Chemical mapping of a 207-nucleotide RNA with DMS and 2A3. The data come from the RNA Mapping Database (RMDB), library OK3TST. DMS adducts were read by reverse transcription with MarathonRT. The DMS profile rests on 4,947 reads.
RNA sequence: GGGAACGACUCGAGUAGAGUCGAAAAGUGGGUUCAUUAAGAGUGAUAAAAGUGGGAAGACAUAAAGAGCCUUUGUGAAUUAAAGUGGAAGAGAAUAACACUUUGCAUGCUAUAAACGUGAAAACUAACAUUUUUGGCCAGACACAGUGGCUCAUGACGAUUAGCUAGUAUUCGUACUAGCUAAUCGAAAAGAAACAACAACAACAAC
Reactivity to DMS in 0.01 (KOAc 150mM, MgCl2 10mM, bicine 150mM(pH8.5), 24C), signal-to-noise 3, nucleotides 027 to 156: g030u000g020g020g030u000u000c050a100u010u000a090a140g010a160g020u000g000a120u000a050a050a040a130g030u000g000g000g020a080a050g020a090c040a090u000a030a070a160g010a080g020c010c010u000u000u010g030u000g020a110a090u010u000a010a040a080g010u000g000g010a100a120g010a180g010a110a060u010a070a110c040a030c030u000u000u000g010c060a100u000g010c030u010a100u010a040a020a020c040g030u020g010a080a060a050a040c090u000a070a120c070a150u000u000u010u000u000g010g000c040c050a140g010a230c040a040c030a050g020u000g010g020c010u000c030a090u000g010a260
Reactivity to 2A3 in 0.01 (KOAc 150mM, MgCl2 10mM, bicine 150mM(pH8.5), 24C), signal-to-noise 6, nucleotides 027 to 156: g050u060g000g000g010u030u030c010a010u040u090a070a030g030a020g060u080g050a060u090a110a100a020a010g030u070g000g020g010a050a020g040a020c020a030u160a070a150a040g020a010g010c010c000u070u100u070g010u010g030a050a080u110u090a100a040a020g000u020g020g030a090a040g060a030g040a110a030u090a110a020c020a000c000u030u010u070g010c030a050u070g010c010u080a040u090a240a030a040c040g040u040g090a050a030a020a070c060u080a090a010c030a120u070u080u070u070u100g020g000c040c010a010g030a040c010a000c000a060g040u010g020g000c010u020c050a040u090g060a010